[RMDB]
RNA sequence: GGGAACGACUCGAGUAGAGUCGAAAAUGGUUAUACAACACGUGGCGAGAGGCAGCCCAAGAAAUCGCCCAGGAUAGGACUUGGCACGAUCCGGUGAAUCAAUUCAUCAUGGGCUCACAAUACGUCAGCAAUGGAGUCACUUCGGUGACUCCAUUGCAAAAGAAACAACAACAACAAC
Reactivity to DMS in 0.01 (KOAc 150mM, MgCl2 10mM, bicine 150mM(pH8.5), 24C), signal-to-noise 1, nucleotides 027 to 126: u000g010g000u000u000a170u060a010c100a120a040c230a200c240g060u000g000g000c080g000a200g000a140g000g090c190a000g020c000c000c000a150a130g000a000a000a080u010c000g060c300c050c000a000g000g150a050u000a040g000g000a070c000u000u060g000g010c100a110c000g000a050u000c130c100g060g030u000g010a000a060u080c280a090a000u100u000c000a060u000c000a130u040g000g000g030c000u000c110a010c090a000a170u000a080c070g000u010c080a000
Reactivity to 2A3 in 0.01 (KOAc 150mM, MgCl2 10mM, bicine 150mM(pH8.5), 24C), signal-to-noise 2, nucleotides 027 to 126: u100g020g020u160u070a110u060a090c040a120a020c140a030c030g010u120g000g020c040g030a030g020a100g140g000c090a000g020c000c000c000a020a050g040a070a070a000u030c000g040c000c000c000a000g080g000a020u130a160g060g130a050c080u020u000g010g010c030a000c140g000a140u030c130c100g000g000u000g030a000a040u080c150a110a240u110u030c000a030u010c030a030u060g000g000g050c000u080c010a100c000a000a090u230a270c200g030u070c040a040